An RNA of 177 nucleotides, treated with 2A3 and DMS and read out base by base. Conditions: 150 mM KOAc, 10 mM MgCl2 and 150 mM bicine (pH 8.5), 24 C. DMS adducts were read by reverse transcription with MarathonRT. The data come from the RNA Mapping Database (RMDB), libraries RFM100 and RFMREP.
RNA sequence: GGGAACGACUCGAGUAGAGUCGAAAAUAAACCGCAGGCGGUUGAAAUACCGCUAAGUCACCAUUAUUGGAAAGACGAGUUGAAAUAAGUCCGGUACAGGGUUUUGUUAGUACCAAAAGGUGGGAAAGAACCAUACUCUAUUCGUAGAGUAUGGUUCAAAAGAAACAACAACAACAAC
Reactivity to 2A3 in 0.01 (KOAc 150mM, MgCl2 10mM, bicine 150mM(pH8.5), 24C), signal-to-noise 3, nucleotides 027 to 126: u030a000a010a000c000c020g020c050a060g060g000c000g010g030u030u020g010a050a030a000u060a010c000c000g000c000u000a020a020g020u020c000a020c080c020a030u070u150a090u220u200g030g020a100a050a080g040a020c010g000a070g080u060u110g150a020a090a050u060a080a010g030u020c030c000g020g040u080a060c010a050g070g010g040u010u050u030u050g000u010u110a080g010u050a020c000c000a000a050a060a020g110g000u050g010g040g030a070a060a010
Reactivity to DMS in 0.01 (KOAc 150mM, MgCl2 10mM, bicine 150mM(pH8.5), 24C), signal-to-noise 6, nucleotides 027 to 126: u010a030a060a240c020c020g020c180a110g000g000c000g000g020u020u000g000a100a040a030u000a040c000c000g020c010u000a050a130g000u010c020a040c000c010a080u020u030a140u030u020g000g010a100a120a110g010a020c010g000a120g020u020u010g010a090a120a080u030a060a080g000u010c020c010g000g010u010a070c040a070g010g000g000u000u000u020u010g010u010u000a120g010u000a060c060c020a040a060a070a090g010g040u000g000g000g010a070a090a110